This 177-nucleotide RNA was probed chemically with DMS and 2A3. The RNA was probed in 150 mM KOAc, 10 mM MgCl2 and 150 mM bicine (pH 8.5) at 24 C. For 2A3 the reverse transcriptase was SuperScript II with manganese. For DMS, 4,625 sequencing reads were counted. DMS adducts were read by reverse transcription with MarathonRT.
[RMDB]
RNA sequence: GGGAACGACUCGAGUAGAGUCGAAAAGGAAGCCCAGUGAGGGGGCUUUGUACACAUCCAGGCAAGAGUGGCUGCAAGUAUUGUGGCUGCUAAGUGGUUAAAUGGUGCAACACAUUUAGGAGAAGGGUGUAAACAUCACAUUCGUGUGAUGUUUACAAAAAGAAACAACAACAACAAC
Reactivity to DMS in 0.01 (KOAc 150mM, MgCl2 10mM, bicine 150mM(pH8.5), 24C), signal-to-noise 4, nucleotides 027 to 126: g010g010a080a070g010c020c010c000a080g020u000g010a130g010g010g010g020g010c030u000u000u000g020u000a080c110a110c080a090u000c020c040a090g000g000c130a100a110g010a020g030u010g000g000c010u000g000c020a020a190g010u010a090u010u000g030u000g000g010c000u000g000c010u000a030a090g020u000g010g010u000u010a040a060a040u000g010g010u000g010c080a050a080c060a050c050a080u000u000u010a050g000g000a060g010a060a050g000g010g030
Reactivity to 2A3 in 0.01 (KOAc 150mM, MgCl2 10mM, bicine 150mM(pH8.5), 24C), signal-to-noise 2, nucleotides 027 to 126: g080g020a060a020g000c000c010c060a000g090u120g170a160g010g140g050g000g040c000u010u020u030g020u040a010c070a020c000a060u030c040c030a010g030g010c020a090a020g030a010g130u010g010g030c010u000g020c010a030a030g090u110a270u290u010g000u020g030g000c000u000g020c000u060a070a040g050u070g050g000u050u040a010a070a060u050g010g010u070g000c010a070a010c020a010c000a150u060u050u090a050g010g040a070g020a060a020g030g010g000